The record gives the reactivity of an RNA of 177 nucleotides to 2A3 and DMS.
[RMDB]
RNA sequence: GGGAACGACUCGAGUAGAGUCGAAAAGACCUCAGCCUGCCACUGAGGGCUAACUGUGGCGUGAGUGUUGGCUCCAGGAGGUGCCAGUGGGAGGGCACUGGAGAGGGUGGGGCUUGGACAUGGGACCCCAAUCACAUAGUUUCGACUAUGUGAUUGGAAAAGAAACAACAACAACAAC
Reactivity to 2A3 in 0.01 (KOAc 150mM, MgCl2 10mM, bicine 150mM(pH8.5), 24C), signal-to-noise 4, nucleotides 027 to 126: g050a030c000c000u030c020a030g050c010c050u120g020c020c010a030c010u030g030a120g030g060g000c020u020a050a040c030u050g040u050g100g010c060g070u090g060a080g010u110g050u100u080g030g000c000u000c000c010a070g040g130a120g000g060u030g050c010c020a020g020u090g020g050g010a150g010g000g010c020a030c090u070g050g030a110g030a060g060g060g040u250g020g000g000g000c000u040u100g040g020a020c030a110u080g050g040g050a040c040c020
Reactivity to DMS in 0.01 (KOAc 150mM, MgCl2 10mM, bicine 150mM(pH8.5), 24C), signal-to-noise 4, nucleotides 027 to 126: g000a090c020c000u000c020a050g010c060c020u010g010c040c060a300c010u000g010a060g000g000g010c040u000a070a110c080u010g010u000g010g010c080g010u000g000a130g010u010g030u010u000g020g010c030u000c010c010a080g000g010a160g010g020u000g010c020c020a050g030u000g000g010g020a140g000g020g010c050a060c070u010g000g010a160g010a120g000g010g000u010g010g000g000g010c140u000u010g010g010a080c120a080u010g000g000g010a180c100c060
For DMS, 5,293 sequencing reads were counted.